[RMDB]
RNA sequence: GGGAACGACUCGAGUAGAGUCGAAAAAGAAGUGGAGUAGGUUUGAAAGAACAAAUUCAAAUAUCAAUGCAAACGGUGGGCAUGUUAUGCUGAAAAGGCUCGAGGGACAAGUCAAGGUACUAGCUAUUAUGCACAAAUAUUUCGAUAUUUGUGCAUAAAAAGAAACAACAACAACAAC
Reactivity to 2A3 in 0.01 (KOAc 150mM, MgCl2 10mM, bicine 150mM(pH8.5), 24C), signal-to-noise 6, nucleotides 027 to 126: a000g100a040a000g010u040g010g030a020g030u050a070g040g090u010u040u070g090a080a050a030g080a080a080c080a050a130a120u070u040c030a010a050a000u150a050u070c060a090a020u100g030c030a060a020a030c020g020g020u030g000g010g000c020a010u010g030u080u080a090u110g020c020u030g030a050a040a040a020g060g000c040u010c040g010a060g010g020g010a010c020a060a010g010u050c030a070a020g040g010u040a040c010u010a030g010c010u010a030u120
Reactivity to DMS in 0.01 (KOAc 150mM, MgCl2 10mM, bicine 150mM(pH8.5), 24C), signal-to-noise 8, nucleotides 027 to 126: a080g000a100a070g020u000g000g010a040g000u010a050g020g010u010u000u000g000a040a040a100g000a090a090c220a040a080a080u010u000c040a020a050a030u010a090u020c060a050a080u020g010c070a060a050a090c080g000g010u010g010g010g000c040a040u010g000u010u020a040u000g010c030u000g000a050a050a080a100g010g010c020u010c090g010a090g010g000g010a060c110a050a060g010u000c060a050a080g000g010u010a050c060u010a060g010c060u000a090u000
Chemical mapping of a 177-nucleotide RNA with 2A3 and DMS. For DMS the reverse transcriptase was MarathonRT. The reactions ran in a buffer of 150 mM KOAc, 10 mM MgCl2 and 150 mM bicine (pH 8.5), at 24 C. Reactivities are given for positions 27 through 126. 2A3 adducts were read by reverse transcription with SuperScript II with manganese.